[RMDB]
Overview: This 177-nucleotide RNA was probed chemically with 2A3 and DMS. DMS adducts were read by reverse transcription with MarathonRT. Conditions: 150 mM KOAc, 10 mM MgCl2 and 150 mM bicine (pH 8.5), 24 C. For 2A3, 7,467 sequencing reads were counted.
RNA sequence: GGGAACGACUCGAGUAGAGUCGAAAAUAUGCCAAGGACACUGCUCUUGUGUCUGACAGACUAGAUAUACUAACAGAAUGAGAGGGAGAAAAUUAACUGGAAGCAGAAUCACCUGAGAGGACAGACCUGCUAGAUAGUAAUUCGUUACUAUCUAGCAAAAAGAAACAACAACAACAAC
Reactivity to 2A3 in 0.01 (KOAc 150mM, MgCl2 10mM, bicine 150mM(pH8.5), 24C), signal-to-noise 5, nucleotides 027 to 126: u180a060u070g040c040c010a020a050g040g010a010c000a000c040u060g050c050u030c030u190u100g000u010g070u030c010u000g020a020c030a030g050a010c020u080a030g050a170u100a030u040a170c040u040a110a040c020a050g070a090a070u090g010a050g000a030g060g060g000a050g070a010a070a050a050u130u070a080a040c030u040g010g030a040a020g000c020a010g030a070a040u050c010a020c030c010u040g010a050g000a020g040g020a010c020a030g050a050c010c010
Reactivity to DMS in 0.01 (KOAc 150mM, MgCl2 10mM, bicine 150mM(pH8.5), 24C), signal-to-noise 9, nucleotides 027 to 126: u010a080u010g010c020c030a090a180g010g010a050c050a050c020u000g010c110u010c100u000u000g020u010g010u010c010u000g000a130c160a060g010a090c080u010a080g010a090u010a080u010a100c090u000a050a110c070a060g000a090a060u000g010a060g000a050g010g010g010a080g000a040a040a050a080u000u000a050a070c080u000g000g010a070a070g010c050a050g000a100a080u000c060a060c050c030u000g010a110g000a090g000g000a070c090a080g010a130c130c090